Structure probing data (DMS and 2A3) for a 177-nucleotide construct. DMS adducts were read by reverse transcription with MarathonRT. The data come from the RNA Mapping Database (RMDB), library OK2TST.

RNA sequence: GGGAACGACUCGAGUAGAGUCGAAAAUAUCGCCUUCGAUCAUCGCCUCGAUCUGAAGCUCGAUCUGGUCCGAAAGCUUGAAGCCAUCGGGGCCGAAAAGCUUGAUGCCGUUAUCGUAGAAGGGAUAGGCAUGAGCAGGAUUCGUCCUGCUCAUGCCAAAAGAAACAACAACAACAAC
Reactivity to DMS in 0.01 (KOAc 150mM, MgCl2 10mM, bicine 150mM(pH8.5), 24C), signal-to-noise 1, nucleotides 027 to 126: u000a030u000c050g000c300c010u000u000c030g000a070u000c080a100u030c150g010c080c060u000c200g010a050u000c000u000g020a010a040g010c060u020c100g000a070u000c140u010g000g000u020c140c050g000a130a070a010g020c000u010u000g010a230a060g000c070c070a200u000c180g020g060g000g000c030c020g010a060a020a010a060g000c010u010u020g000a190u000g000c020c000g030u000u000a020u000c050g010u010a080g000a060a020g000g000g000a090u000a120
Reactivity to 2A3 in 0.01 (KOAc 150mM, MgCl2 10mM, bicine 150mM(pH8.5), 24C), signal-to-noise 1, nucleotides 027 to 126: u100a010u000c040g120c010c000u000u000c000g030a000u050c000a010u070c020g070c020c000u030c060g050a120u080c070u170g030a060a000g000c010u020c010g110a110u000c090u060g100g000u110c040c040g090a020a010a010g000c040u050u050g110a060a010g020c000c010a040u110c170g250g020g010g000c010c000g020a050a030a000a000g000c030u000u050g040a000u070g000c040c040g030u110u080a090u060c040g010u080a020g020a070a020g000g000g010a000u030a060